Chemical mapping of a 177-nucleotide RNA with 2A3 and DMS. For 2A3 the reverse transcriptase was SuperScript II with manganese. The RNA was probed in 150 mM KOAc, 10 mM MgCl2 and 150 mM bicine (pH 8.5) at 24 C.
[RMDB]
RNA sequence: GGGAACGACUCGAGUAGAGUCGAAAAAAAAAGAUAUGGAAUCGGGCAGCCGAAGAACUAUGAAUGUAGCAUAUCGGAAACGAUAUGUAUUAUAGCAUAGGGAGGCUGCCGAUUCCUAAGUCAAAAACAUGUUAAUGGAGUUCGCUCCAUUAACAUGAAAAGAAACAACAACAACAAC
Reactivity to 2A3 in 0.01 (KOAc 150mM, MgCl2 10mM, bicine 150mM(pH8.5), 24C), signal-to-noise 2, nucleotides 027 to 126: a020a020a000a020a050g010a010u030a000u040g000g010a010a010u020c170g160g300g060c040a010g000c000c000g300a300a020g020a000a010c010u020a010u020g010a140a090u140g010u020a000g010c010a000u000a000u030c000g000g000a010a000a000c000g010a000u000a000u010g000u000a030u010u100a020u020a010g010c000a000u000a000g010g010g010a000g000g000c000u000g020c000c000g000a000u000u000c000c000u000a000a000g000u000c020a050a060a030a010a040
Reactivity to DMS in 0.01 (KOAc 150mM, MgCl2 10mM, bicine 150mM(pH8.5), 24C), signal-to-noise 3, nucleotides 027 to 126: a040a080a080a080a110g000a000u000a000u010g000g000a020a000u000c000g030g040g010c000a020g020c000c000g000a080a100g000a080a200c000u000a000u000g000a080a010u010g000u000a300g010c000a000u000a010u000c000g020g010a010a000a020c000g000a010u000a000u000g000u000a000u010u000a020u000a090g000c010a000u000a010g000g010g000a000g030g020c000u000g010c000c010g000a000u000u000c000c000u000a000a050g000u010c010a070a060a080a110a130
For 2A3, 5,762 sequencing reads were counted.